[RMDB]
The data come from the RNA Mapping Database (RMDB), library RSTRND.
Structure probing data (DMS and 2A3) for a 207-nucleotide construct.

RNA sequence: GGGAACGACUCGAGUAGAGUCGAAAAGACGACUCGCCGCGACUUCCUCUUAUCGAGAGGUAAACAAGGAGCGAGUUUAAAGGCUAGUCAGCUCAGCUGGCAACACCGUCAAAUUGCGGGAACAUCCUAAGAGCUAUCGACCACCAAGCAGGCUGCUUCACUACAUUAUCUUCGGAUAAUGUAGUGAAAAAGAAACAACAACAACAAC
Reactivity to DMS in 0.01 (KOAc 150mM, MgCl2 10mM, bicine 150mM(pH8.5), 24C), signal-to-noise 2, nucleotides 027 to 156: g070a170c090g010a090c000u000c020g000c000c000g000c070g010a300c080u020u010c010c000u010c030u000u010a180u000c170g070a090g010a070g000g000u010a060a050a230c070a100a200g030g010a080g010c040g020a050g060u000u030u000a040a070a050g000g010c050u000a300g030u000c010a070g020c020u000c070a210g050c010u020g020g000c000a090a150c170a060c020c000g000u020c060a080a080a130u000u000g000c000g000g000g000a090a030c040a080u000c000c000u020a140a180g020a090g000c030u000a070u000c010g020a160c020c010a040c060c040a010a070g000c050a070g020g010c030u000g030c070u000
Reactivity to 2A3 in 0.01 (KOAc 150mM, MgCl2 10mM, bicine 150mM(pH8.5), 24C), signal-to-noise 7, nucleotides 027 to 156: g070a020c070g010a010c000u020c020g020c010c000g100c050g090a100c030u080u060c050c020u010c030u050u130a260u300c190g060a020g000a010g020g020u110a080a120a060c070a050a050g080g000a090g040c000g010a010g000u000u000u000a010a000a000g020g000c010u020a010g030u050c020a010g000c030u040c140a020g000c020u000g010g000c010a020a040c020a050c060c010g020u040c020a030a130a240u180u150g000c020g000g000g000a030a030c020a090u050c010c020u050a100a020g010a010g010c010u020a030u110c050g050a060c010c030a020c010c000a050a030g030c040a020g070g000c010u040g000c000u040
The reactions ran in a buffer of 150 mM KOAc, 10 mM MgCl2 and 150 mM bicine (pH 8.5), at 24 C. For 2A3, 6,566 sequencing reads were counted. Reactivities are given for positions 27 through 156.